[RMDB]
RNA sequence: GGGAACGACUCGAGUAGAGUCGAAAAGAUAUGGAGACUCCUGGGACAUGCAUGGUGGUCGGAAACGACCAGAAGUGCAACAGCCCAGGGAGUCUCCUAAGUCAAAACCGGAUCUUCGGAUCCGGAACAAUCAAGCCUUGUUCGCAAGGCUUGAUUGAAAAGAAACAACAACAACAAC
Reactivity to 2A3 in 0.01 (KOAc 150mM, MgCl2 10mM, bicine 150mM(pH8.5), 24C), signal-to-noise 1, nucleotides 027 to 126: g010a000u060a030u150g000g010a000g000a000c000u010c010c020u010g010g030g010a070c140a190u180g020c020a000u150g030g160u050g000g000u190c000g010g000a020a080a040c010g000a010c000c000a000g040a080a000g050u000g010c010a070a060c080a130g100c020c000c000a000g010g000g000a000g000u020c010u000c000c000u000a000a000g000u000c000a000a030a070a080c000c000g000g000a010u000c000u110u130c300g180g000a000u000c000c000g000g000a000a020
Reactivity to DMS in 0.01 (KOAc 150mM, MgCl2 10mM, bicine 150mM(pH8.5), 24C), signal-to-noise 2, nucleotides 027 to 126: g010a010u000a300u000g000g030a020g030a030c000u000c000c010u010g010g000g000a040c120a290u000g030c000a040u000g000g030u010g010g000u000c000g000g000a060a080a240c000g020a040c000c010a030g000a220a300g010u000g000c000a000a090c210a140g040c010c000c000a060g000g020g010a020g000u010c010u000c000c000u000a020a070g000u020c040a100a040a140a160c000c000g000g000a010u000c000u000u040c280g010g010a020u000c000c010g010g010a020a070
An RNA of 177 nucleotides, treated with 2A3 and DMS and read out base by base.